[RMDB]
RNA sequence: GGGAACGACUCGAGUAGAGUCGAAAAGAUAUGGAUCCGUCUUCGCAUCGAUCUAUGUUUAAAUGAAACUAUAUCGGAAACGAUAUAGUUUCGGUAAACAUAGGGAGCGAAGUCGGAUCCUAAGUCACUCUUAUGUCGUGUUCGCACGACAUAAGAGAAAAGAAACAACAACAACAAC
Reactivity to 2A3 in 0.01 (KOAc 150mM, MgCl2 10mM, bicine 150mM(pH8.5), 24C), signal-to-noise 2, nucleotides 027 to 126: g000a010u070a000u100g010g000a010u040c010c020g040u030c000u000u010c010g020c000a250u300c110g020a010u020c000u010a020u020g060u000u000u060a300a300a300u300g020a010a010a000c010u000a010u000a000u000c010g000g000a030a020a000c020g000a000u000a020u000a000g000u010u000u000c010g000g000u020a010a000a000c000a010u000a000g000g050g000a020g000c000g040a000a010g020u000c000g010g020a000u000c000c000u000a000a000g000u010c000a000
Reactivity to DMS in 0.01 (KOAc 150mM, MgCl2 10mM, bicine 150mM(pH8.5), 24C), signal-to-noise 1, nucleotides 027 to 126: g010a030u010a130u010g000g000a000u000c000c010g030u000c000u000u000c000g020c000a300u010c240g010a030u020c000u000a010u010g000u000u000u020a040a110a130u030g000a010a010a030c000u010a000u010a000u000c000g000g010a060a010a060c000g010a010u000a000u000a000g000u000u000u000c000g000g030u020a000a020a000c000a000u000a000g000g000g010a000g000c000g010a020a020g000u010c000g030g000a010u000c000c000u010a020a060g000u000c020a300